[RMDB]
The record gives the reactivity of an RNA of 207 nucleotides to 2A3. 2A3 adducts were read by reverse transcription with SuperScript II with manganese. Conditions: 150 mM KOAc, 10 mM MgCl2 and 150 mM bicine (pH 8.5), 24 C.
RNA sequence: GGGAACGACUCGAGUAGAGUCGAAAAUCUUGCCACUUACUUCAAAAAGGACAAGUAAGACUGACUGUAGUAUCAACACUUAGCACCUAUAACACAUAGCACUGCUUCUUUCACUUCUACAUGUUACCUUUUCACUCUUUGCACUCCUUGAUUUAAAACGCGGGCAUGGGUUCGCCCAUGCCCGCGUAAAAGAAACAACAACAACAAC
Reactivity to 2A3 in 0.01 (KOAc 150mM, MgCl2 10mM, bicine 150mM(pH8.5), 24C), signal-to-noise 2, nucleotides 027 to 156: u080c030u080u060g080c030c020a080c030u050u070a050c050u040u100c100a040a050a120a100a040g060g000a080c000a000a090g020u030a060a000g040a070c070u050g070a010c000u080g000u120a040g050u090a060u160c090a080a090c020a000c060u030u000a010g060c000a040c040c020u120a090u160a210a040c040a020c030a100u040a000g000c020a030c130u050g000c000u040u010c000u010u110u020c030a060c050u040u000c000u120a040c030a060u120g020u080u080a120c010c000u000u000u090u110c000a000c040u010c010u040u020u090g030c030a000c070u090c000c000u060u050g060a080u090u090u170a050a100a010